[RMDB]
RNA sequence: GGGAACGACUCGAGUAGAGUCGAAAAAGGCUGGGGUUGGUGGACCGCUUGAGGCCGGGAGUUCUGCGGCGUGCUGUCCUAUGGCGAUCGGGCGUCCACGCUAAGUUCGGCAUCGAUAUGGUUACCCCGGGGGAGCCCAGGGCAACCAGGUCGUCUACCUUUGACUUAUGUUCGCAUAAGUCAAAGGAAAAGAAACAACAACAACAAC
Reactivity to 2A3 in 0.01 (KOAc 150mM, MgCl2 10mM, bicine 150mM(pH8.5), 24C), signal-to-noise 2, nucleotides 027 to 156: a010g100g000c050u060g000g050g080g020u100u070g030g010u030g010g000a020c060c130g000c020u020u020g000a030g020g080c020c020g000g030g000a060g020u180u140c110u180g020c010g090g050c060g040u130g000c010u040g030u080c010c020u110a250u150g010g000c020g120a210u050c020g000g020g000c010g000u020c000c000a030c020g010c030u050a040a040g110u080u120c040g010g020c030a030u060c030g000a020u010a020u140g000g000u000u000a020c010c020c050c050g000g000g000g010g020a110g060c000c000c000a000g000g000g050c020a000a000c000c000a020g030g010u010c020g030u000c050u050a110
The record gives the reactivity of an RNA of 207 nucleotides to 2A3.
Reactivities are given for positions 27 through 156.
The reactions ran in a buffer of 150 mM KOAc, 10 mM MgCl2 and 150 mM bicine (pH 8.5), at 24 C.
The data come from the RNA Mapping Database (RMDB), library ARCHII.